[RMDB]
RNA sequence: GGGAACGACUCGAGUAGAGUCGAAAACACAAGGCGAGUUGCUUCUGCAUUGCAUGGUGCAGAUUUUAGAACAGUGCCAGCGUCACAGUCAUCUCCCCUGGACCAAAUCAGAGAAUUCAACUUCUUUCUAUGGAAAUGAAUAAGAAGUUUAGGUAAAAUUCCUAAAAGGAUUCGUCCUUUUAGGAAUAAAAGAAACAACAACAACAAC
Reactivity to DMS in 0.01 (KOAc 150mM, MgCl2 10mM, bicine 150mM(pH8.5), 24C), signal-to-noise 3, nucleotides 027 to 156: c040a150c120a080a140g000g010c010g000a210g040u000u000g020c020u000u030c020u010g010c020a050u000u010g040c150a080u010g020g000u000g010c000a040g020a110u000u000u000u010a100g020a080a120c050a160g020u010g010c020c040a110g010c040g010u010c290a070c050a130g000u000c040a070u010c060u000c010c010c030c020u010g010g010a180c090c060a050a080a150u000c080a110g000a160g000a050a090u010u010c040a050a030c020u000u000c010u000u000u000c040u000a150u020g030g010a130a150a130u000g030a090a040u010a020a020g000a050a010g010u000u010u010a050g030g010u010a030a060a140
Reactivity to 2A3 in 0.01 (KOAc 150mM, MgCl2 10mM, bicine 150mM(pH8.5), 24C), signal-to-noise 1, nucleotides 027 to 156: c070a010c010a040a040g020g000c030g000a080g050u050u020g020c010u000u010c000u020g000c010a000u020u030g010c060a010u070g000g000u000g000c000a000g000a060u070u050u050u140a060g000a060a020c030a010g040u010g090c000c000a010g030c050g070u050c030a100c010a160g050u070c050a150u010c030u020c010c010c000c000u030g010g000a020c030c010a040a040a130u120c040a000g050a030g090a140a080u120u130c050a010a010c020u000u000c000u040u060u030c040u050a140u140g040g040a110a130a020u070g020a020a050u140a110a000g050a000a000g010u050u070u100a020g000g010u080a050a210a020
Structure probing data (DMS and 2A3) for a 207-nucleotide construct. The data come from the RNA Mapping Database (RMDB), library OK3TST. For 2A3 the reverse transcriptase was SuperScript II with manganese.